[RMDB]
RNA sequence: GGGAACGACUCGAGUAGAGUCGAAAACACCCGCAAUUCGUUGCGGGUGAGAGCACCACUCCUGCGGGAGUUAAGGCCAUACGGACAGCCGGGUCCAAAGCCAUAGCAGGUCCUUCGGGACCUGCAAUAGUCCUAAAAUAUUCGUAUUUUAGGACUAAAAAGAAACAACAACAACAAC
Reactivity to 2A3 in 0.01 (KOAc 150mM, MgCl2 10mM, bicine 150mM(pH8.5), 24C), signal-to-noise 3, nucleotides 027 to 126: c010a000c010c010c000g000c010a020a050u110u110c230g030u080u040g000c000g000g000g000u010g010a000g000a000g000c040a040c030c010a010c000u020c000c010u070g050c220g060g000g010a020g010u030u110a100a020g010g000c010c010a030u060a100c100g020g010a000c000a040g130c070c050g130g050g000u000c000c010a050a040a000g020c000c010a060u130a060g030c010a000g010g010u000c030c010u040u080c150g040g000g000a000c000c000u010g010c010a000a000
Reactivity to DMS in 0.01 (KOAc 150mM, MgCl2 10mM, bicine 150mM(pH8.5), 24C), signal-to-noise 2, nucleotides 027 to 126: c020a000c000c000c000g030c000a030a020u000u010c150g010u000u010g010c000g010g000g020u000g000a000g010a080g020c100a080c030c090a060c010u000c010c000u000g020c120g010g010g010a030g010u000u010a050a070g000g000c000c040a100u010a120c160g000g010a040c060a090g000c100c110g010g000g010u010c020c020a060a130a200g010c040c050a060u030a120g020c010a010g010g000u000c000c000u010u010c140g020g010g000a020c000c020u000g000c020a020a030